[RMDB]
RNA sequence: GGGAACGACUCGAGUAGAGUCGAAAAAUGCGACGGCGACGGUGUAUUCCAGUUAUCAACGAUAUUACCGAGGGAUUUGCUGCCGAAGAGCUGGAAUAUGCAGUUUUCGACGAAUCUCUCUUCACAACACUAAUCAUGGAUUCGUCCAUGAUUAGUGAAAAGAAACAACAACAACAAC
Reactivity to 2A3 in 0.01 (KOAc 150mM, MgCl2 10mM, bicine 150mM(pH8.5), 24C), signal-to-noise 4, nucleotides 027 to 126: a010u060g000c010g010a010c020g000g020c020g010a010c010g000g000u010g000u010a030u010u000c010c000a010g020u070u060a120u130c040a070a070c060g040a050u040a080u260u190a120c050c060g020a100g040g060g000a020u060u080u260g060c070u090g040c030c010g030a050a030g020a010g020c000u000g000g030a020a030u070a040u100g000c010a000g000u000u000u040u010c020g000a020c010g020a040a050u000c010u000c030u000c050u100u100c120a130c050a180a050
Reactivity to DMS in 0.01 (KOAc 150mM, MgCl2 10mM, bicine 150mM(pH8.5), 24C), signal-to-noise 7, nucleotides 027 to 126: a080u010g000c030g010a110c040g020g010c060g010a020c020g020g030u000g010u000a030u000u000c010c010a050g000u000u010a100u010c050a080a210c100g010a080u010a070u010u010a120c080c050g000a140g020g010g000a080u000u000u000g020c130u000g010c070c010g010a060a120g010a070g010c010u000g000g010a060a050u000a040u000g000c010a040g010u000u000u000u000c010g000a110c020g010a060a060u000c020u000c010u000c060u010u010c080a070c160a110a160